RNA sequence: GGGAACGACUCGAGUAGAGUCGAAAAGAAACAUUAGGCAUCCGCACCGGGAGAACCUUGAAGUUAUUCAAUUCACCUGGUUUUCGGUCUCGUUGCAGCGAAACGGGACGGAAAACCAUCGCGUUACCUCUAAGGACGAGUUCGCUUGUCUUUAGAGAAAAGAAACAACAACAACAAC
Reactivity to DMS in 0.01 (KOAc 150mM, MgCl2 10mM, bicine 150mM(pH8.5), 24C), signal-to-noise 9, nucleotides 027 to 126: g010a090a070a050c050a080u010u010a060g010g010c060a140u000c010c020g010c050a070c060c060g000g010g000a070g000a060a110c060c060u010u010g010a060a090g000u010u020a070u010u010c060a050a100u010u010c040a080c030c060u010g000g000u000u010u000u000c000g000g010u000c000u000c000g000u000u000g000c110a150g010c200g010a040a010a000c000g000g000g010a010c000g000g010a000a000a000a000c010c000a020u010c100g000c110g000u000u010a080c140
Reactivity to 2A3 in 0.01 (KOAc 150mM, MgCl2 10mM, bicine 150mM(pH8.5), 24C), signal-to-noise 9, nucleotides 027 to 126: g050a010a060a000c040a040u130u140a030g020g000c020a030u020c010c010g050c060a070c040c030g050g020g010a040g030a040a060c010c010u040u060g070a080a030g060u100u090a120u140u110c050a060a090u060u070c060a090c110c020u010g000g000u020u000u000u010c090g130g000u000c010u000c000g010u010u060g100c200a190g110c120g110a020a000a000c000g000g000g010a000c030g030g000a000a000a000a000c010c000a010u030c020g010c030g060u060u090a060c010
Chemical mapping of a 177-nucleotide RNA with DMS and 2A3. The reactions ran in a buffer of 150 mM KOAc, 10 mM MgCl2 and 150 mM bicine (pH 8.5), at 24 C. DMS adducts were read by reverse transcription with MarathonRT. Reactivities are given for positions 27 through 126. The 2A3 profile rests on 48,016 reads.